Source information:
Chemical mapping of a 177-nucleotide RNA with DMS and 2A3. The RNA was probed in 150 mM KOAc, 10 mM MgCl2 and 150 mM bicine (pH 8.5) at 24 C. High DMS reactivity at an A or C suggests that its Watson-Crick edge is free.
[RMDB]
RNA sequence: GGGAACGACUCGAGUAGAGUCGAAAAAGCUGCUCAAAAUCGGCGGAAAGGACCCCGCUAUCGGGAGUGGCUAGCAGCGAGGGUUGCCGCUCCAGCCGCGCUAUGAAGCAGACAUAGCAGAUUUACAAAUAGUCAUAUAUUUCGAUAUAUGACUAUUAAAAGAAACAACAACAACAAC
Reactivity to DMS in 0.01 (KOAc 150mM, MgCl2 10mM, bicine 150mM(pH8.5), 24C), signal-to-noise 9, nucleotides 027 to 126: a100g000c010u000g000c010u000c180a050a050a110a070u010c050g010g010c010g010g000a040a160a230g000g010a110c050c020c000c010g020c020u000a070u010c130g010g020g010a100g020u000g010g010c040u000a050g010c210a040g010c030g000a110g010g010g010u000u010g010c030c010g000c190u000c020c010a080g020c030c030g010c290g010c020u000a020u010g000a100a070g000c050a040g000a120c020a010u000a020g010c010a220g000a130u010u010u010a090c180a070
Reactivity to 2A3 in 0.01 (KOAc 150mM, MgCl2 10mM, bicine 150mM(pH8.5), 24C), signal-to-noise 6, nucleotides 027 to 126: a000g020c000u010g000c010u050c150a050a070a060a140u130c040g010g000c000g000g030a030a050a060g080g010a050c000c000c000c010g000c020u090a090u160c050g110g010g020a100g100u140g080g050c030u020a040g050c040a000g010c010g050a280g010g040g030u070u120g120c000c000g000c030u000c000c010a000g010c000c010g030c010g000c010u010a000u020g030a060a000g010c020a000g010a030c010a010u020a000g000c030a020g080a210u200u210u120a070c050a050